[RMDB]
RNA sequence: GGGAACGACUCGAGUAGAGUCGAAAACUUAACGCUUCGGCGUUAAGAAAAAACCUUUGUGGGUAUCGUUCAACAGCCCAUACGCGAGGUCCCAUUGGGACCUCAUGGGACAUGAACCGUACCCACUCUGGUAAAAAACACCUCUUCGGAGGUGUAAGACACGUAUCUGGUUCGCCAGAUACGUGUCAAAAGAAACAACAACAACAAC
Reactivity to 2A3 in 0.01 (KOAc 150mM, MgCl2 10mM, bicine 150mM(pH8.5), 24C), signal-to-noise 2, nucleotides 027 to 156: c000u000u000a000a000c000g020c060u080u080c290g140g000c010g010u020u010a010a000g000a090a030a010a010a000a000c000c000u000u000u000g000u000g000g000g000u010a030u010c010g010u000u010c010a070a080c050a250g020c010c000c000a020u070a080c300g070c100g030a000g000g010u010c000c010c060a240u300u300g030g000g000a000c020c010u000c000a000u000g030g000g000a030c030a070u030g000a010a010c000c030g010u000a000c010c010c000a000c000u000c000u000g000g000u030a050a070a000a050a000a000c010a010c000c030u020c030u010u040c210g110g000a000g000g000u000g000u000a000a010